Source: RMDB library OK3TST, as collected in RNAgym. An RNA of 207 nucleotides, treated with DMS and 2A3 and read out base by base.
RNA sequence: GGGAACGACUCGAGUAGAGUCGAAAAGAGUACAUAUGCCCAGCCUUACUGAUGCGGCUGGAUGCUUCGUGCAAAUGCUAUGUACGCCUACGUAUAUGUGCGUAGAUGCCUAUAUUUUCUCUCCUGAGAAAAUAUAGAUGCAUACAAAGCAUAUGCAGAUAGUCCGAUAUUUCGAUAUCGGACUAUCAAAAGAAACAACAACAACAAC
Reactivity to DMS in 0.01 (KOAc 150mM, MgCl2 10mM, bicine 150mM(pH8.5), 24C), signal-to-noise 3, nucleotides 027 to 156: g010a100g030u010a080c050a050u010a110u000g010c000c030c000a050g010c020c010u000u020a300c100u000g010a120u000g020c190g020g010c020u020g010g000a080u000g020c010u000u000c130g000u000g020c010a020a150a070u010g030c000u000a160u000g030u000a020c050g030c020c010u010a030c040g050u000a090u000a060u000g030u000g010c110g010u010a040g000a120u000g010c030c000u000a010u000a000u000u000u000u000c000u000c010u000c220c300u010g050a020g000a010a010a010a010u000a010u000a020g020a060u000g020c030a070u000a020c000a010a140a200g000c000a020u000a050u000g000c000a300
Reactivity to 2A3 in 0.01 (KOAc 150mM, MgCl2 10mM, bicine 150mM(pH8.5), 24C), signal-to-noise 9, nucleotides 027 to 156: g040a020g010u010a000c010a010u020a020u300g010c020c010c010a010g000c010c010u220u230a190c130u280g140a210u260g080c070g010g000c010u010g010g020a030u080g000c010u060u160c180g150u190g010c010a050a060a160u200g000c010u010a000u010g000u000a000c000g030c000c010u040a040c050g030u010a010u000a000u040g070u060g030c040g020u010a030g010a160u020g000c000c000u000a000u000a000u000u000u000u000c000u000c020u050c050c200u180g000a000g000a000a000a000a000u000a000u000a000g010a020u150g000c000a010u050a080c010a010a050a000g000c000a000u010a010u010g000c010a010

About this RNA
For 2A3 the reverse transcriptase was SuperScript II with manganese.